[RMDB]
RNA sequence: GGGAACGACUCGAGUAGAGUCGAAAAGGUGUGAGAAAAGUUACAUAUGGUACUGCGCAUUGGUUGUUUGCGACCCUUGUCUCAACCUAUGUGAUAAUCUUACAAGCCACUAAAUUUACUUUGUGGAACUCUUCCAUACCUUCGGGUAUGGAAGAGUAAAAGAAACAACAACAACAAC
Reactivity to DMS in 0.01 (KOAc 150mM, MgCl2 10mM, bicine 150mM(pH8.5), 24C), signal-to-noise 1, nucleotides 027 to 126: g000g060u000g030u010g030a000g000a010a040a070a180g000u030u000a020c000a000u000a000u000g010g000u000a100c170u000g020c300g010c010a010u000u000g040g010u010u030g060u050u020u000g010c070g010a020c000c020c090u000u000g000u000c040u010c060a090a030c000c000u000a020u000g010u000g000a010u000a050a300u000c000u010u000a000c010a090a110g030c010c000a000c000u020a020a050a080u010u010u010a030c240u000u000u050g020u010g000g010a090
Reactivity to 2A3 in 0.01 (KOAc 150mM, MgCl2 10mM, bicine 150mM(pH8.5), 24C), signal-to-noise 1, nucleotides 027 to 126: g080g040u030g000u000g030a030g000a020a080a040a040g010u010u010a010c000a000u030a000u300g020g010u060a080c060u030g020c040g000c020a000u000u010g000g050u040u000g040u180u210u300g050c000g010a020c000c030c000u000u000g100u080c010u000c050a100a130c000c000u000a010u030g010u000g010a020u020a120a020u010c000u000u000a000c010a060a000g030c000c000a020c000u070a040a100a120u090u180u060a090c090u120u130u040g000u010g020g020a040

Chemical mapping of a 177-nucleotide RNA with DMS and 2A3. Values cover nucleotides 27 to 126. Conditions: 150 mM KOAc, 10 mM MgCl2 and 150 mM bicine (pH 8.5), 24 C. 2A3 adducts were read by reverse transcription with SuperScript II with manganese. DMS adducts were read by reverse transcription with MarathonRT. For 2A3, 743 sequencing reads were counted. The data come from the RNA Mapping Database (RMDB), library 15KREP.